[RMDB]
RNA sequence: GGGAACGACUCGAGUAGAGUCGAAAAGGUUUUGUCUCGGCAUCCGCCUGAGCGGCCGUCAGGGCGCCGUCACGAAGAAGGAUACCGGUCGCGGCGAUCUCUCCUUCGAUCUCGGCAUUGACGGCGCGCAUCACCUGGUCUUCGGACCAGGUGAUGCAAAAGAAACAACAACAACAAC
Reactivity to 2A3 in 0.01 (KOAc 150mM, MgCl2 10mM, bicine 150mM(pH8.5), 24C), signal-to-noise 1, nucleotides 027 to 126: g030g000u000u020u050u140g040u040c010u020c010g000g030c030a300u070c130c150g060c030c060u160g010a030g090c000g000g020c000c000g050u160c030a060g000g210g110c080g060c000c000g000u010c000a000c060g000a000a090g000a000a000g050g000a020u090a090c000c020g020g090u170c060g050c140g120g010c050g000a000u000c020u010c000u000c000c020u010u000c060g150a300u020c020u010c050g000g000c060a020u000u000g000a000c010g000g000c010g050c020